[RMDB]
RNA sequence: GGGAACGACUCGAGUAGAGUCGAAAAGCAAAUAAGAUUUAGGGGAAGAAGAUGACAACCUUCUCGCGGUCUUCCCUGUUACGUGUGUAGACACAAUGAAUGUCAACAAAACUAAAUAUACAAAAAAACUUAGAUAGUCGUUCGCGACUAUCUAAGUAAAAGAAACAACAACAACAAC
Reactivity to 2A3 in 0.01 (KOAc 150mM, MgCl2 10mM, bicine 150mM(pH8.5), 24C), signal-to-noise 1, nucleotides 027 to 126: g070c040a070a050a160u270a120a110g030a050u130u100u290a130g020g020g010g020a010a010g010a050a020g100a120u150g000a000c030a000a020c030c000u040u000c010u000c030g090c080g010g000u000c000u000u020c000c000c010u000g010u050u060a100c120g010u030g000u010g070u150a010g060a090c000a000c000a060a070u110g080a260a010u000g000u000c000a010a010c000a040a200a000a010c010u140a050a080a160u250a030u140a100c130a000a300a000a000a000a000
Reactivity to DMS in 0.01 (KOAc 150mM, MgCl2 10mM, bicine 150mM(pH8.5), 24C), signal-to-noise 1, nucleotides 027 to 126: g010c160a060a100a160u000a010a040g020a070u010u020u010a060g030g000g000g000a020a040g010a100a030g000a060u000g030a070c130a080a070c180c020u000u000c010u000c060g020c160g000g010u000c000u000u000c010c000c000u000g020u000u040a020c200g000u000g000u000g010u010a070g000a020c040a010c020a090a080u020g010a090a130u000g000u000c020a070a080c070a020a050a070a060c060u000a090a100a060u020a070u000a040c030a000a000a130a110a040a080
Chemical mapping of a 177-nucleotide RNA with 2A3 and DMS.
Reactivities are given for positions 27 through 126.
2A3 adducts were read by reverse transcription with SuperScript II with manganese.